[RMDB]
RNA sequence: GGGAACGACUCGAGUAGAGUCGAAAACAGGAGAUCCGCAUAGCUCCAUUCUACUAUGCAUCUAGUCGUCGUUUUCGACGUCUAGUAUAGCCCAACACUGCUGGGGCGAUGAACAGCAGAUUACCACUACACGUAGCGUGGGUUAUGGCUACGUACACCACUCGCCAGGGUUCGCCCUGGCGAGUGGAAAAGAAACAACAACAACAAC
Reactivity to 2A3 in 0.01 (KOAc 150mM, MgCl2 10mM, bicine 150mM(pH8.5), 24C), signal-to-noise 1, nucleotides 027 to 156: c030a070g000g000a030g050a000u090c080c030g140c000a000u010a050g000c000u000c040c000a130u140u120c080u100a010c000u010a000u000g000c000a000u020c000u000a000g000u000c000g000u000c000g000u080u210u230u300c050g030a000c000g000u000c000u000a000g010u020a050u160a020g000c010c010c010a000a120c150a050c100u060g040c000u000g010g000g000g000c060g070a120u120g140a110a020c000a000g000c000a000g000a000u040u150a020c060c020a040c030u080a100c000a010c150g000u020a000g030c000g030u010g020g140g000u000u200a000u040g060g000c000u000a000c000g010u090a020c000a030
Structure probing data (2A3) for a 207-nucleotide construct. 2A3 adducts were read by reverse transcription with SuperScript II with manganese. Conditions: 150 mM KOAc, 10 mM MgCl2 and 150 mM bicine (pH 8.5), 24 C. Reactivities are given for positions 27 through 156.